[RMDB]
RNA sequence: GGGAACGACUCGAGUAGAGUCGAAAACAGUGGAGCUUUUUGGAGACUUCUGUAGAACUAAAGUGUUUUGUAAUUCUACAACUUCUAACACUAUUAAAUUUCCUGAACCUAAUCCAAAAGAGGUGGACACCCUAAUUCUAUUCGUAGAAUUAGGGUGAAAAGAAACAACAACAACAAC
Reactivity to 2A3 in 0.01 (KOAc 150mM, MgCl2 10mM, bicine 150mM(pH8.5), 24C), signal-to-noise 3, nucleotides 027 to 126: c020a000g020u030g040g060a100g110c080u080u140u090u180u110g090g040a060g030a090c000u070u000c040u200g030u060a010g000a020a000c020u070a120a090a070g080u100g110u070u090u170u120g060u090a010a070u060u020c010u040a040c000a080a030c020u040u030c000u060a060a020c010a000c010u050a070u140u110a070a110a070u020u030u000c020c000u030g040a030a020c010c000u030a060a050u040c030c020a000a050a010a040g120a040g070g040u050g000g070a010
Reactivity to DMS in 0.01 (KOAc 150mM, MgCl2 10mM, bicine 150mM(pH8.5), 24C), signal-to-noise 4, nucleotides 027 to 126: c070a030g020u000g000g010a100g020c070u000u000u000u000u000g000g010a040g010a060c070u000u000c130u010g010u000a020g010a030a030c040u010a060a070a090g010u010g010u000u000u010u010g000u000a060a100u000u000c030u000a030c030a020a080c090u010u000c050u000a070a120c000a010c010u000a080u010u000a040a090a150u000u000u000c000c010u000g010a050a060c040c010u000a110a110u010c010c030a030a050a070a130g010a050g010g010u000g000g000a290